This 177-nucleotide RNA was probed chemically with 2A3 and DMS. The RNA was probed in 150 mM KOAc, 10 mM MgCl2 and 150 mM bicine (pH 8.5) at 24 C. DMS (dimethyl sulfate) methylates the pairing face of unpaired adenines and cytosines. For 2A3 the reverse transcriptase was SuperScript II with manganese. The DMS profile rests on 3,024 reads.
RNA sequence: GGGAACGACUCGAGUAGAGUCGAAAACCGGAGGGAUCCAAGAGACGGACGACUUUCCCCCAUUGGUUGGGAAAAGUCCCGGAACCAGGAAAUGGGAAAGAGACGGUAGAAAAGAGCGAGCCUCCCACAUAUUAGCGUAGUUCGCUACGCUAAUAUGAAAAGAAACAACAACAACAAC
Reactivity to 2A3 in 0.01 (KOAc 150mM, MgCl2 10mM, bicine 150mM(pH8.5), 24C), signal-to-noise 2, nucleotides 027 to 126: c000c010g000g020a050g060g000g000a140u030c040c030a080a070g050a040g040a150c020g010g040a030c040g020a050c030u000u010u010c010c000c010c010c000a050u020u120g050g020u070u040g010g010g000a050a100a020a030g110u000c020c000c010g010g020a000a010c000c010a010g030g020a070a100a050u110g040g000g000a000a070a020g020a010g020a020c030g010g050u090a060g160a050a110a030a020g060a030g020c020g000a000g040c010c000u000c000c010c000a020
Reactivity to DMS in 0.01 (KOAc 150mM, MgCl2 10mM, bicine 150mM(pH8.5), 24C), signal-to-noise 4, nucleotides 027 to 126: c010c030g010g000a020g010g000g000a130u010c020c040a140a130g020a130g010a150c070g000g000a070c080g000a120c010u010u000u000c010c000c010c090c050a280u010u000g020g020u000u000g000g020g000a040a070a060a080g000u000c010c020c010g010g010a080a080c050c030a060g000g000a030a060a080u010g000g000g000a000a050a030g000a230g000a050c050g000g010u010a080g000a080a060a090a070g000a090g010c040g020a070g000c020c020u000c010c010c070a230